[RMDB]
RNA sequence: GGGAACGACUCGAGUAGAGUCGAAAAACGGUGCGGAAGUUCGCGCUUCCGUGAAACGCGAAAAUCGGCCGGUGGCUGCAAGUCGCAUCGCAAAACCGCGGCAAGUGGAGUUAGCGAGAGGAGGCUGAAACCAUCCAACACUUCGGUGUUGGAUGAACAAUAGAGCUGACUUCGGUCAGCUCUAUUGAAAAGAAACAACAACAACAAC
Reactivity to 2A3 in 0.01 (KOAc 150mM, MgCl2 10mM, bicine 150mM(pH8.5), 24C), signal-to-noise 2, nucleotides 027 to 156: a010c030g100g030u240g040c000g010g030a040a000g020u080u140c060g040c060g000c120u020u000c020c010g020u020g030a090a100a020c090g010c010g070a030a040a010a140u080c020g000g030c000c040g080g000u030g020g000c070u140g040c120a150a000g000u030c010g010c070a040u020c020g000c050a010a050a040a000c030c000g030c020g060g040c190a160a020g020u030g040g020a080g020u060u080a010g010c010g020a040g000a030g030g070a040g010g000c020u020g020a050a020a000c030c000a000u010c000c000a000a000c010a000c000u010u070c200g070g000u010g000u000u000g000g010a000u000g000a010a000
Reactivity to DMS in 0.01 (KOAc 150mM, MgCl2 10mM, bicine 150mM(pH8.5), 24C), signal-to-noise 1, nucleotides 027 to 156: a040c000g000g010u000g050c000g010g000a040a100g020u000u010c180g040c200g040c000u000u000c010c110g010u040g010a030a030a090c070g020c010g000a030a010a070a090u000c030g010g020c020c000g020g010u000g000g000c040u010g050c030a100a090g010u010c020g020c020a300u000c020g040c000a050a130a050a180c010c050g000c050g000g020c110a110a170g030u000g020g010a130g040u000u000a150g010c050g000a080g060a180g000g020a080g010g020c000u000g010a100a000a170c150c010a030u000c000c010a050a010c000a010c010u010u000c220g060g010u010g000u020u000g000g010a000u000g010a050a090